An RNA of 177 nucleotides, treated with DMS and read out base by base.
The reactions ran in a buffer of 150 mM KOAc, 10 mM MgCl2 and 150 mM bicine (pH 8.5), at 24 C.
For DMS, 772 sequencing reads were counted.
The data come from the RNA Mapping Database (RMDB), library OK2TST.
RNA sequence: GGGAACGACUCGAGUAGAGUCGAAAAUGCCGAUCUGGACGCAGCAGGCGUCAGCACCACGGAUGAGGCAAUCCGCGAAAAAAUGUUCGCCUUCAUGGAAGAGGCGAUCCGUCAGGUGAAGCAGGAAUAAAUUAGGGCACUUCGGUGCCCUAAUUUAAAAAGAAACAACAACAACAAC
Reactivity to DMS in 0.01 (KOAc 150mM, MgCl2 10mM, bicine 150mM(pH8.5), 24C), signal-to-noise 1, nucleotides 027 to 126: u030g000c010c020g000a020u010c020u000g040g030a020c020g020c060a240g010c190a080g070g000c050g000u000c130a070g020c020a030c070c060a230c040g010g010a020u000g020a140g020g030c010a130a030u000c030c040g000c080g010a020a060a090a060a090a030u030g000u010u010c000g020c000c000u000u010c020a190u010g000g000a160a050g000a050g010g020c010g020a000u000c030c100g010u000c030a080g050g010u000g000a210a080g010c060a050g040g020a040a190